RNA sequence: GGGAACGACUCGAGUAGAGUCGAAAAUCAGAUGCGGUUGUGGGCUGUCUCUGAAUGCGCAUAACCUGGCAGUAAUAUCACAGUUUAGAGCAACAAUGAUAAACGAUGAAGCUGCAGUGCGAUCAUCCAUAGCAGGAUGAUUCGUCAUCCUGCUAUGAAAAGAAACAACAACAACAAC
Reactivity to 2A3 in 0.01 (KOAc 150mM, MgCl2 10mM, bicine 150mM(pH8.5), 24C), signal-to-noise 9, nucleotides 027 to 126: u110c030a010g050a080u070g050c060g040g020u060u050g040u120g060g110g000c030u050g040u090c020u000c010u110g120a160a060u150g010c060g000c020a020u030a090a080c010c010u060g090g000c010a000g010u060a060a100u040a030u150c020a030c020a060g010u020u030u060a080g020a020g100c040a030a130c030a100a090u110g050a070u090a040a060a010c050g040a040u070g040a060a020g000c000u020g000c020a030g030u050g080c020g010a050u080c020a030u030c050
Reactivity to DMS in 0.01 (KOAc 150mM, MgCl2 10mM, bicine 150mM(pH8.5), 24C), signal-to-noise 9, nucleotides 027 to 126: u030c070a080g010a080u020g010c100g000g010u010u000g020u000g000g000g010c030u000g000u000c080u020c050u010g000a070a060u010g010c010g000c020a020u010a070a080c140c070u030g010g000c020a040g000u010a100a090u030a090u010c030a070c230a150g020u000u010u010a020g010a130g010c120a080a090c260a100a080u060g010a120u010a010a020a030c060g000a080u010g000a070a120g010c030u000g000c030a110g020u000g000c010g000a100u020c070a070u010c160